Source: RMDB library TTRINS, as collected in RNAgym. This 177-nucleotide RNA was probed chemically with 2A3 and DMS. The RNA was probed in 150 mM KOAc, 10 mM MgCl2 and 150 mM bicine (pH 8.5) at 24 C.
[RMDB]
RNA sequence: GGGAACGACUCGAGUAGAGUCGAAAAGAUAUGGACACAUGCAUUGCUUGGAUUUAUUGGCCACUAGAUACCAAUUCGGAAACGAAUUGGUAUCUAUGCCAAUUGUCAGCAAUGUGUGUCCUAAGUCGACCCUUAUGUUGUUCGCAACAUAAGGGUCAAAAGAAACAACAACAACAAC
Reactivity to 2A3 in 0.01 (KOAc 150mM, MgCl2 10mM, bicine 150mM(pH8.5), 24C), signal-to-noise 2, nucleotides 027 to 126: g050a040u130a050u270g000g010a010c000a000c020a050u300g120c020a010u030u030g000c040u150u290g280g030a140u300u300u200a010u000u190g000g000c010c050a120c100u000a000g000a010u000a000c000c020a000a010u000u000c000g010g030a070a090a120c000g000a000a000u000u000g010g000u010a000u000c010u000a000u030g000c010c000a000a010u010u000g000u020c000a000g000c000a000a020u020g000u010g000u010g010u040c000c010u010a090a020g160u060c080
Reactivity to DMS in 0.01 (KOAc 150mM, MgCl2 10mM, bicine 150mM(pH8.5), 24C), signal-to-noise 1, nucleotides 027 to 126: g000a110u000a300u020g000g000a010c010a010c050a090u020g030c020a010u000u010g000c000u000u000g020g020a030u000u000u000a010u000u000g000g010c000c030a050c020u000a000g000a030u000a000c000c000a000a010u000u010c000g000g010a180a160a220c000g000a010a010u000u000g000g000u000a020u000c000u000a000u020g010c000c000a010a010u000u000g010u010c010a070g010c000a000a030u000g010u000g010u010g050u000c000c000u010a050a160g000u000c090
For DMS, 1,840 sequencing reads were counted.